[RMDB]
RNA sequence: GGGAACGACUCGAGUAGAGUCGAAAAUCCGACGAGCUGAACGCUUUCGCAGGAAAGCUUGACCAGCUAAUCUUCUGCAACGCCAUUACGAGGACUGCCCUUAGAGGCUCAUGGCGAUAGGUCACCCAAAACUAUUUGAGGUUCGCCUCAAAUAGAACAUAUAGCGUAUCUUCGGAUACGCUAUAUGAAAAGAAACAACAACAACAAC
Reactivity to 2A3 in 0.01 (KOAc 150mM, MgCl2 10mM, bicine 150mM(pH8.5), 24C), signal-to-noise 8, nucleotides 027 to 156: u040c020c010g050a080c080g030a020g000c020u060g070a120a030c070g010c020u040u070u090c090g010c040a040g060g090a090a080a010g010c010u060u070g070a060c020c010a000g000c010u030a090a110u060c070u160u020c040u070g020c020a090a060c010g020c010c010a040u100u140a080c110g040a070g080g080a100c070u080g000c000c000c010u070u150a100g040a120g090g020c010u020c020a010u020g010g010c010g030a060u090a060g030g000u040c040a060c010c030c010a030a110a050a090c000u000a000u000u000u000g000a010g030g030u070u090c190g100c020c000u000c000a000a000a000u000a000g000a010a010
Reactivity to DMS in 0.01 (KOAc 150mM, MgCl2 10mM, bicine 150mM(pH8.5), 24C), signal-to-noise 4, nucleotides 027 to 156: u000c020c040g020a110c030g010a060g030c020u000g010a090a120c170g010c000u000u000u000c000g020c300a190g000g000a060a060a040g010c000u010u010g010a140c130c030a060g000c020u010a060a110u000c060u010u000c050u000g020c030a120a150c020g030c010c020a070u000u000a090c080g000a170g030g000a130c050u010g000c020c010c010u000u000a100g010a100g020g030c010u000c060a060u000g020g010c000g010a100u000a040g010g000u000c010a120c000c000c020a060a020a130a200c010u000a010u010u000u000g000a040g010g020u000u010c300g010c010c000u010c000a010a010a000u000a000g010a080a230